[RMDB]
RNA sequence: GGGAACGACUCGAGUAGAGUCGAAAAUGGAGGUGAUGGAGGCUGAUGCAAUGCGGAUGCGCGCAAAGCGCCCCUUCGGCUUUACCGACCUGCAUCGGGGCAAGGGCGUGCAGGAAAUCAUUGAUUAAGGCUACCUAAUAUUCGUAUUAGGUAGCCUAAAAGAAACAACAACAACAAC
Reactivity to 2A3 in 0.01 (KOAc 150mM, MgCl2 10mM, bicine 150mM(pH8.5), 24C), signal-to-noise 2, nucleotides 027 to 126: u090g020g020a030g000g020u070g000a050u070g010g020a020g000g050c000u020g010a010u080g000c050a090a020u060g020c030g100g040a090u080g030c080g000c010g020c060a000a170a040g030c000g010c030c000c010c010u020u010c010g040g010c000u080u080u030a070c000c010g040a050c020c000u030g000c010a030u070c060g010g010g000g000c030a040a030g060g000g000c000g020u030g000c000a000g020g050a030a040a010u130c040a040u030u090g080a030u150u060a060
Reactivity to DMS in 0.01 (KOAc 150mM, MgCl2 10mM, bicine 150mM(pH8.5), 24C), signal-to-noise 4, nucleotides 027 to 126: u010g000g010a110g010g000u010g000a050u000g000g020a070g000g000c060u010g010a080u010g010c060a060a060u000g020c080g010g020a140u010g020c050g010c030g000c070a060a050a210g010c140g010c010c030c010c010u000u000c030g000g010c090u000u010u000a100c060c030g000a070c130c040u020g020c050a040u010c150g020g010g000g020c070a090a160g000g000g010c070g030u000g020c030a030g020g000a110a080a050u000c110a070u000u000g000a100u010u000a070